About this RNA
Structure probing data (DMS and 2A3) for a 177-nucleotide construct. 2A3 adducts were read by reverse transcription with SuperScript II with manganese. Reactivities are rounded to 0.1 and cut off at 0 and 3. Values cover nucleotides 27 to 126. The 2A3 profile rests on 2,622 reads.
[RMDB]
RNA sequence: GGGAACGACUCGAGUAGAGUCGAAAAUCAGCUUGGCUCACUAGAUAUCCAAAUCCGUAUAGUCUUCACGUAGUCUCAGCUGAUGUACUCGAGCGAUAUGUGGAUGAUGAAGGUCGACUAUAUACCAGAUAAUCCCAGUGUUCGCACUGGGAUUAUCAAAAGAAACAACAACAACAAC
Reactivity to DMS in 0.01 (KOAc 150mM, MgCl2 10mM, bicine 150mM(pH8.5), 24C), signal-to-noise 4, nucleotides 027 to 126: u010c020a020g020c000u010u000g010g020c020u000c060a090c100u000a050g030a070u000a060u010c060c070a070a110a080u010c130c130g010u010a050u010a060g000u000c020u000u000c050a110c150g010u010a040g010u000c020u010c170a060g000c010u010g000a060u010g000u000a020c010u000c020g010a030g010c070g010a120u000a040u000g030u000g010g000a070u000g010a070u010g020a110a130g000g020u000c050g010a070c030u000a060u000a070u010a130c080c090a180
Reactivity to 2A3 in 0.01 (KOAc 150mM, MgCl2 10mM, bicine 150mM(pH8.5), 24C), signal-to-noise 3, nucleotides 027 to 126: u010c000a000g010c000u010u050g010g010c020u020c040a020c030u080a030g020a090u060a040u080c070c050a030a090a190u060c080c030g010u050a040u020a050g130u020c000u030u100c070a050c120g070u080a040g020u020c020u020c080a010g000c000u000g010a020u010g030u010a020c000u010c040g010a010g000c030g000a040u020a070u220g100u050g030g040a070u070g030a030u050g110a110a010g050g020u030c000g010a010c040u000a010u010a010u060a200c020c030a010